[RMDB]
RNA sequence: GGGAACGACUCGAGUAGAGUCGAAAAUGGCCCAGCGUGGAGCACUUCUACCAGGCCCAGAAGUUUGCAGGUGUGCAGCAUGCGGAGGCGCUGGCAGUUGUGGAGCGGAUAGCGGCGGCAGGGAGCCCUUGCCUAUAAGCUUCGGCUUAUAGGCAAGAAAAGAAACAACAACAACAAC
Reactivity to 2A3 in 0.01 (KOAc 150mM, MgCl2 10mM, bicine 150mM(pH8.5), 24C), signal-to-noise 1, nucleotides 027 to 126: u110g140g010c070c030c030a000g020c070g030u070g070g100a090g040c050a000c050u040u000c000u030a050c000c010a010g000g000c010c010c000a080g030a230a020g020u130u170u090g000c010a030g080g120u070g030u030g110c030a030g050c000a010u230g000c050g100g070a100g030g000c210g030c180u020g010g000c080a050g000u090u100g040u080g060g010a070g040c080g000g050a090u050a050g000c100g070g010c050g030g070c050a060g060g000g000a070g000c020c000
Reactivity to DMS in 0.01 (KOAc 150mM, MgCl2 10mM, bicine 150mM(pH8.5), 24C), signal-to-noise 2, nucleotides 027 to 126: u010g010g010c020c020c040a150g000c090g020u000g010g020a140g000c040a060c030u010u000c020u000a060c030c020a060g000g040c010c010c050a100g000a110a070g030u000u000u010g040c000a060g020g020u010g000u000g000c030a080g020c060a050u010g010c060g030g020a160g000g000c050g030c030u010g000g020c040a040g030u000u010g010u010g010g010a100g010c080g000g010a120u010a060g040c080g010g020c070g000g010c050a080g000g010g000a100g000c090c050
An RNA of 177 nucleotides, treated with 2A3 and DMS and read out base by base. Reactivities are rounded to 0.1 and cut off at 0 and 3. For 2A3, 847 sequencing reads were counted. Source: RMDB library OK2TRN, as collected in RNAgym.